[RMDB]
RNA sequence: GGGAACGACUCGAGUAGAGUCGAAAAGAUAUGGAGCUGUAUGGGAGCUGUUCGGAAACGAAUACAGCUUUGAUCAUAGAGCUCCUAAGUCAAAACUGCUCGUGGUAGUUCGCUACCACGAGCAGAAUCAUUGACCGUAGUUCGCUACGGUCAAUGAAAAAGAAACAACAACAACAAC
Reactivity to DMS in 0.01 (KOAc 150mM, MgCl2 10mM, bicine 150mM(pH8.5), 24C), signal-to-noise 1, nucleotides 027 to 126: g000a050u010a300u000g000g000a020g000c000u020g010u000a000u000g010g000g010a010g010c000u000g010u010u000c000g000g000a060a070a230c000g010a010a070u000a080c000a000g010c000u000u000u050g000a070u010c000a030u000a000g000a010g000c000u000c000c000u010a010a060g010u010c060a070a080a110a220c000u000g020c000u000c000g000u010g000g000u000a020g010u000u000c200g030c000u000a000c000c000a000c000g000a000g000c010a000g000a020a090
Reactivity to 2A3 in 0.01 (KOAc 150mM, MgCl2 10mM, bicine 150mM(pH8.5), 24C), signal-to-noise 1, nucleotides 027 to 126: g040a010u050a000u130g000g000a000g000c030u030g050u300a010u010g030g000g060a030g000c000u000g000u040u010c040g050g010a070a020a050c010g030a040a020u290a210c000a010g010c000u180u090u060g060a040u040c000a010u020a010g200a000g070c000u030c000c000u010a000a000g000u020c020a060a090a160a160c000u020g000c000u030c010g000u000g030g000u040a020g020u040u140c270g030c110u000a000c010c000a000c000g010a020g020c000a000g010a010a010
The data come from the RNA Mapping Database (RMDB), library TTRDEL. This 177-nucleotide RNA was probed chemically with DMS and 2A3. The RNA was probed in 150 mM KOAc, 10 mM MgCl2 and 150 mM bicine (pH 8.5) at 24 C. Reactivities are given for positions 27 through 126.